[RMDB]
RNA sequence: GGGAACGACUCGAGUAGAGUCGAAAACGGCAACACCACAGCCGAAGAUGCUCGUGUUCCGGCGCCGCAUCACGAGGUCGAGCUUAUUUUAAUCAAGCCUCCAAUCGCUACUCUCUCCGCUCUACAUAGCAUCGCUACGCACGUGGAGUCCUAUAUCCCUAAACUAUACCUUCGGGUAUAGUUUAGGAAAAGAAACAACAACAACAAC
Reactivity to 2A3 in 0.01 (KOAc 150mM, MgCl2 10mM, bicine 150mM(pH8.5), 24C), signal-to-noise 5, nucleotides 027 to 156: c020g020g010c040a100a020c010a050c080c000a030c020a030g010c000c040g020a030a020g030a040u100g020c020u020c070g040u040g050u110u060c070c030g060g020c050g010c020c030g030c020a050u050c020a010c050g030a010g050g000u070c040g050a050g020c020u100u080a130u150u210u090u190a150a080u220c100a080a000g040c020c010u000c030c030a040a060u080c050g010c050u050a040c010u030c000u010c010u000c060c020g000c020u040c010u030a030c020a080u110a040g020c010a090u070c070g010c070u040a020c050g020c050a040c070g020u020g010g020a020g010u030c000c030u100a100u040a050u210c000
Reactivity to DMS in 0.01 (KOAc 150mM, MgCl2 10mM, bicine 150mM(pH8.5), 24C), signal-to-noise 1, nucleotides 027 to 156: c080g000g010c000a060a070c050a180c050c000a050c050a160g040c070c030g030a060a100g020a090u000g040c000u030c030g010u000g020u000u020c030c040g010g020c050g000c040c080g010c030a110u010c040a110c010g020a080g000g030u000c060g010a140g000c030u000u000a120u000u000u000u000a140a200u000c050a080a040g000c050c020u000c030c010a060a120u010c040g020c000u000a010c050u000c010u000c020u010c020c030g000c020u010c010u010a030c030a090u010a110g040c010a140u000c090g000c010u000a050c050g010c010a090c240g020u010g010g010a130g040u000c010c030u010a120u000a120u000c050
The record gives the reactivity of an RNA of 207 nucleotides to 2A3 and DMS.
For 2A3, 4,007 sequencing reads were counted.
It was measured as part of the RMDB library OK3TST.
For 2A3 the reverse transcriptase was SuperScript II with manganese.